[RMDB]
RNA sequence: GGGAACGACUCGAGUAGAGUCGAAAAUGCGGCCCACGAUGUUUACCUCUGCCCCGCAACGGCAUGGUAUCCCGGCGCGUGGCCGGUGGUGGCUGGGCUACCAAGAGCGAAGUCGGGCAUGGCCUUAGGGUGCGUGUGUAUUCGUACACACGCACCCAAAAGAAACAACAACAACAAC
Reactivity to 2A3 in 0.01 (KOAc 150mM, MgCl2 10mM, bicine 150mM(pH8.5), 24C), signal-to-noise 1, nucleotides 027 to 126: u150g050c000g080g000c030c000c000a030c000g110a200u270g140u100u110u140a120c010c000u040c040u050g000c010c010c000c000g010c010a000a120c140g020g020c040a120u210g000g000u060a000u150c090c010c000g020g020c040g000c050g070u070g000g000c010c000g000g090u070g000g000u130g000g060c000u000g020g010g010c000u020a000c040c040a190a000g150a000g100c040g040a040a000g000u050c010g000g000g000c010a040u100g000g010c000c000u060u000a070
Structure probing data (2A3) for a 177-nucleotide construct.
Reactivities are rounded to 0.1 and cut off at 0 and 3.
The reactions ran in a buffer of 150 mM KOAc, 10 mM MgCl2 and 150 mM bicine (pH 8.5), at 24 C.
The 2A3 profile rests on 408 reads.
Source: RMDB library OK1LIB, as collected in RNAgym.
2A3 adducts were read by reverse transcription with SuperScript II with manganese.